Chemical mapping of a 207-nucleotide RNA with DMS and 2A3.
The DMS profile rests on 2,283 reads.

RNA sequence: GGGAACGACUCGAGUAGAGUCGAAAAGUCGAAGGGAAACCUUUGGCUAGUAUCUGGGUGUAGAUUUCACCUAAGUGCAACACUGUUCAAAUUGCGGGAAAGCCCUAAAGCUUUGCUAACCAAGCUGUCCUAGAAAUGGGAUGGUGGCCAGGUGAAACACAUGCCUAAACUUCGGUUUAGGCAUGUGAAAAGAAACAACAACAACAAC
Reactivity to DMS in 0.01 (KOAc 150mM, MgCl2 10mM, bicine 150mM(pH8.5), 24C), signal-to-noise 1, nucleotides 027 to 156: g020u000c000g060a020a060g030g000g010a270a190a250c000c010u000u000u000g030g040c000u030a070g030u000a010u010c020u000g040g000g000u000g000u000a110g030a260u000u000u010c000a000c000c020u030a030a080g030u000g020c000a120a070c040a080c050u010g030u010u030c050a010a130a140u010u010g020c050g010g030g000a030a040a030g000c010c020c030u000a040a090a130g020c020u000u000u040g010c120u000a090a130c110c070a070a150g000c030u020g000u000c000c000u000a060g030a050a110a060u000g020g000g000a040u000g010g030u000g000g030c050c040a060g000g010u000g010a030a070a180
Reactivity to 2A3 in 0.01 (KOAc 150mM, MgCl2 10mM, bicine 150mM(pH8.5), 24C), signal-to-noise 2, nucleotides 027 to 156: g010u000c000g000a010a000g000g020g000a030a090a090c010c000u000u000u010g000g000c010u000a020g050u060a030u090c100u070g090g020g000u070g020u050a070g070a300u060u120u090c020a020c000c000u040a170a040g010u050g080c040a120a050c030a020c070u020g020u030u010c020a070a160a080u060u070g020c060g000g020g000a000a060a030g040c020c000c020u210a110a100a030g000c050u100u070u050g040c020u060a070a120c000c040a040a030g000c010u020g000u000c010c010u020a030g050a050a060a040u060g040g000g000a030u010g000g040u060g020g020c030c000a030g000g000u000g090a000a030a000